[RMDB]
RNA sequence: GGGAACGACUCGAGUAGAGUCGAAAAGAUAUGGAACCGCUAGCUUUUGACGCCUCGCAUAUCGGAAACGAUAUGAUGAGGGCGAUAAGCUAGGGUUCCUAAGUCAAAGAACGUGUUCGCACGUUCAGAACUGAUUUUGGUUCGCCAAAAUCAGUUCAAAAGAAACAACAACAACAAC
Reactivity to 2A3 in 0.01 (KOAc 150mM, MgCl2 10mM, bicine 150mM(pH8.5), 24C), signal-to-noise 4, nucleotides 027 to 126: g020a010u080a030u120g000g010a000a000c020c040g070c300u000a000g000c000u200u120u160u300g220a200c210g060c040c000u000c000g000c010a000u000a010u000c000g000g050a030a030a000c030g020a010u010a030u070g250a300u120g030a300g070g030g000c000g030a050u050a040a000g000c010u000a010g000g000g000u000u000c000c000u000a020a020g020u000c050a090a050a230g000a020a000c000g000u010g050u140u170c300g000c150a000c000g000u030u000c020a000
Reactivity to DMS in 0.01 (KOAc 150mM, MgCl2 10mM, bicine 150mM(pH8.5), 24C), signal-to-noise 3, nucleotides 027 to 126: g000a050u010a300u000g000g010a020a010c010c010g020c000u010a010g010c010u000u000u000u000g010a300c300g020c000c000u000c000g010c000a010u000a000u000c000g000g000a100a080a210c000g000a010u000a010u000g010a070u020g000a100g020g000g010c010g020a090u000a020a020g010c000u000a000g000g010g000u000u000c000c000u010a010a060g000u000c030a120a180a080g010a000a000c000g050u000g010u000u020c270g000c000a010c000g000u000u000c000a120